[RMDB]
Chemical mapping of a 177-nucleotide RNA with DMS and 2A3.
The DMS profile rests on 1,087 reads.
2A3 adducts were read by reverse transcription with SuperScript II with manganese.
DMS (dimethyl sulfate) methylates the pairing face of unpaired adenines and cytosines.
The reactions ran in a buffer of 150 mM KOAc, 10 mM MgCl2 and 150 mM bicine (pH 8.5), at 24 C.
RNA sequence: GGGAACGACUCGAGUAGAGUCGAAAAAGGCCGUGUCGGGAACACGCCCGGGGUUGUCCUCAAAAGGCAGGGUCCAUACUACGGAAGCCGUCGUUGUAUUCGAGACCUGCCUGUGCAACGCACGUCGGGUCAUGAAACGUUUCGACGUUUCAUGACCAAAAGAAACAACAACAACAAC
Reactivity to DMS in 0.01 (KOAc 150mM, MgCl2 10mM, bicine 150mM(pH8.5), 24C), signal-to-noise 1, nucleotides 027 to 126: a080g010g010c150c030g000u000g010u000c030g020g040g070a140a120c080a080c120g000c090c010c010g040g000g000g000u000u020g000u000c040c010u010c130a040a070a120a010g000g000c000a020g010g010g000u010c030c000a100u000a000c030u000a010c050g040g020a090a100g030c160c060g000u000c030g000u010u010g010u030a010u000u000c200g030a110g000a200c010c000u010g000c020c000u000g030u000g000c090a090a070c110g020c060a010c060g030u040c130g000
Reactivity to 2A3 in 0.01 (KOAc 150mM, MgCl2 10mM, bicine 150mM(pH8.5), 24C), signal-to-noise 1, nucleotides 027 to 126: a080g030g000c140c000g040u040g130u040c040g050g080g060a110a100c040a010c050g030c000c000c010g050g040g010g010u040u030g000u070c000c060u140c040a110a130a050a000g000g030c010a010g040g000g010u000c020c000a020u040a040c020u020a000c040g120g060a150a060g070c080c090g040u070c010g020u000u000g070u070a120u020u180c090g000a050g000a090c010c000u000g010c000c020u010g010u010g040c060a110a080c070g000c030a020c050g210u110c110g130